[RMDB]
RNA sequence: GGGAACGACUCGAGUAGAGUCGAAAAGGCCAUCCCCAAGGGAGCUCAUGCUGCGGGGCCCUGAGCAAGCCCUCUGCUGGCGCCUAUCAAACGACACAGGCCUGAUCCUCGCGGACCAGGCCUGUGUGUAGUGUACCUUCUUCGGAAGGUACACUACAAAAGAAACAACAACAACAAC
Reactivity to DMS in 0.01 (KOAc 150mM, MgCl2 10mM, bicine 150mM(pH8.5), 24C), signal-to-noise 2, nucleotides 027 to 126: g000g000c000c010a090u020c030c020c000c090a140a160g030g000g000a060g000c020u010c100a050u010g000c010u000g010c150g000g020g000g000c000c010c000u000g050a080g020c260a150a240g000c000c000c000u000c040u000g000c000u000g010g020c050g000c000c040u000a100u000c160a060a150a080c170g010a140c000a010c000a000g050g040c000c000u080g030a020u010c000c010u000c130g010c300g000g090a030c010c010a030g020g000c010c020u000g000u000g010u000
Reactivity to 2A3 in 0.01 (KOAc 150mM, MgCl2 10mM, bicine 150mM(pH8.5), 24C), signal-to-noise 4, nucleotides 027 to 126: g080g020c040c020a070u050c030c000c000c020a080a100g060g020g010a050g000c030u060c150a060u160g000c010u040g030c070g060g000g000g030c000c000c000u070g010a080g020c020a050a010g010c000c010c000u010c020u040g020c020u020g000g010c020g010c000c000u130a180u230c120a090a090a060c100g060a010c010a010c000a000g000g000c000c000u000g000a010u000c010c030u180c120g050c300g030g000a020c000c000a000g000g000c000c000u010g000u000g000u000

Conditions: 150 mM KOAc, 10 mM MgCl2 and 150 mM bicine (pH 8.5), 24 C.
This 177-nucleotide RNA was probed chemically with DMS and 2A3.
Values cover nucleotides 27 to 126.
The data come from the RNA Mapping Database (RMDB), libraries RFM100 and RFMREP.
For 2A3 the reverse transcriptase was SuperScript II with manganese.